An RNA of 177 nucleotides, treated with DMS and read out base by base.
[RMDB]
RNA sequence: GGGAACGACUCGAGUAGAGUCGAAAACGUGGAUCUCCCCCUCAUCCAACUCCGAAAGUCUGAAUCUCCCAAGGAGGGCACCAUCUUACAGAGACUCUCCCUGACGGUGGAAUUUAAGUUUAGGGUCCCUCAAUUGGAAUUUCGAUUCCAAUUGAGGAAAAGAAACAACAACAACAAC
Reactivity to DMS in 0.01 (KOAc 150mM, MgCl2 10mM, bicine 150mM(pH8.5), 24C), signal-to-noise 2, nucleotides 027 to 126: c140g000u000g020g000a090u010c020u010c030c010c000c020c030u000c040a050u010c090c040a080a170c050u000c010c010g020a080a090a110g000u000c030u020g000a110a090u020c070u010c020c000c000a070a120g000g010a060g010g000g000c060a040c040c060a060u000c010u000u000a060c150a130g000a150g010a110c040u000c050u010c040c010c010u000g000a080c140g010g000u010g010g020a060a060u010u010u020a070a090g000u000u010u000a110g000g000g010u010c080

It was measured as part of the RMDB library OK2TST.